RNA sequence: GGGAACGACUCGAGUAGAGUCGAAAAGGAGCAUUGAACGACCUGAUUGAGGUCAAGGGCAAUCUCACACUCGAUGGGACGCUGGAUGUCGCAGAAACAGCGGGUGGUAGCUACGGUCCAGGUAUCACUAGUCCACCAUCUUCGGAUGGUGGACUAGAAAAGAAACAACAACAACAAC
Reactivity to 2A3 in 0.01 (KOAc 150mM, MgCl2 10mM, bicine 150mM(pH8.5), 24C), signal-to-noise 1, nucleotides 027 to 126: g040g000a060g020c090a050u080u080g020a050a000c000g020a020c050c010u120g120a300u070u280g120a050g050g000u000c030a020a070g010g000g090c020a040a010u070c010u020c020a020c010a020c050u060c000g050a040u050g070g000g020a000c020g040c110u130g060g000a010u160g120u120c000g040c040a000g090a060a070a000c020a000g050c000g040g000g000u020g020g030u020a050g000c000u000a020c050g020g000u020c010c010a050g090g040u060a010u100c020a010
Reactivity to DMS in 0.01 (KOAc 150mM, MgCl2 10mM, bicine 150mM(pH8.5), 24C), signal-to-noise 2, nucleotides 027 to 126: g000g000a080g050c120a050u000u000g000a060a170c060g000a010c000c000u010g010a220u000u010g010a000g000g020u020c020a080a060g000g010g060c110a040a070u000c000u020c030a110c020a030c040u000c090g000a100u000g000g030g000a140c150g000c040u020g000g000a140u030g000u000c030g030c070a090g000a070a120a100c060a050g010c040g000g000g060u000g010g000u000a060g000c000u020a080c090g000g000u000c010c000a080g000g050u000a140u000c060a200
The record gives the reactivity of an RNA of 177 nucleotides to 2A3 and DMS.
Values cover nucleotides 27 to 126.
For 2A3 the reverse transcriptase was SuperScript II with manganese.
The reactions ran in a buffer of 150 mM KOAc, 10 mM MgCl2 and 150 mM bicine (pH 8.5), at 24 C.